Chemical mapping of a 177-nucleotide RNA with 2A3 and DMS.

RNA sequence: GGGAACGACUCGAGUAGAGUCGAAAACGAGAUCACUCUCUGAUUCUUCUCUCUCAACCAACUUCAUUCAAGCGAGAUGGCGGGCUCUUGGACUCACGUGACAUACAAGUGGCAACCAGAUGUCAACUGGGAAUAAUUUUUUCGAAAAUUAUUCCCAAAAAGAAACAACAACAACAAC
Reactivity to 2A3 in 0.01 (KOAc 150mM, MgCl2 10mM, bicine 150mM(pH8.5), 24C), signal-to-noise 6, nucleotides 027 to 126: c040g010a020g010a080u160c060a040c110u030c020u000c040u040g050a090u060u000c010u070u020c010u000c000u000c010u000c020a060a080c040c020a050a100c050u130u080c060a130u090u070c080a110a030g050c040g070a040g010a130u040g040g020c010g020g010g000c010u010c000u060u070g050g040a040c010u020c050a040c060g060u060g050a020c010a030u120a020c020a060a090g050u030g070g000c000a040a110c020c010a040g020a090u060g060u040c020a040a040c110
Reactivity to DMS in 0.01 (KOAc 150mM, MgCl2 10mM, bicine 150mM(pH8.5), 24C), signal-to-noise 4, nucleotides 027 to 126: c140g000a050g000a090u030c140a090c130u010c000u020c020u000g010a300u010u010c030u000u000c020u010c000u010c010u000c030a080a100c180c070a050a060c070u020u010c060a060u020u010c130a070a100g020c090g010a100g020a060u020g000g000c060g000g000g010c030u010c030u000u010g010g010a080c040u010c020a090c050g020u010g000a090c040a060u010a060c090a040a030g030u000g010g020c070a070a060c030c030a100g000a070u000g000u000c040a060a060c150
Reactivities are rounded to 0.1 and cut off at 0 and 3. Source: RMDB library OK1LIB, as collected in RNAgym. The DMS profile rests on 7,273 reads. The 2A3 profile rests on 4,318 reads.